[RMDB]
RNA sequence: GGGAACGACUCGAGUAGAGUCGAAAACCCCCCAGGAAUGGCGGAACCCCACUCAGCAUGGGUUCGCGUUCCAUCCUUUCUUACCUGAUGGCCGGCAUGGUCCCAGCCUCCUCGCUGGCGCCGGCUGGUCUUACCGUAACUUCGGUUACGGUAAGACAAAAGAAACAACAACAACAAC
Reactivity to DMS in 0.01 (KOAc 150mM, MgCl2 10mM, bicine 150mM(pH8.5), 24C), signal-to-noise 1, nucleotides 027 to 126: c000c000c000c010c020c000a060g020g000a040a030u000g040g010c240g010g000a030a030c030c010c030c170a100c170u000c170a080g010c190a110u000g010g000g000u000u000c000g030c050g000u040u020c010c010a050u000c050c040u030u000u020c080u010u010a140c070c060u000g030a090u010g000g000c000c030g010g000c000a130u020g010g000u000c300c010c030a030g020c010c070u020c110c080u000c130g000c000u000g000g030c210g000c000c020g000g010c010u010g010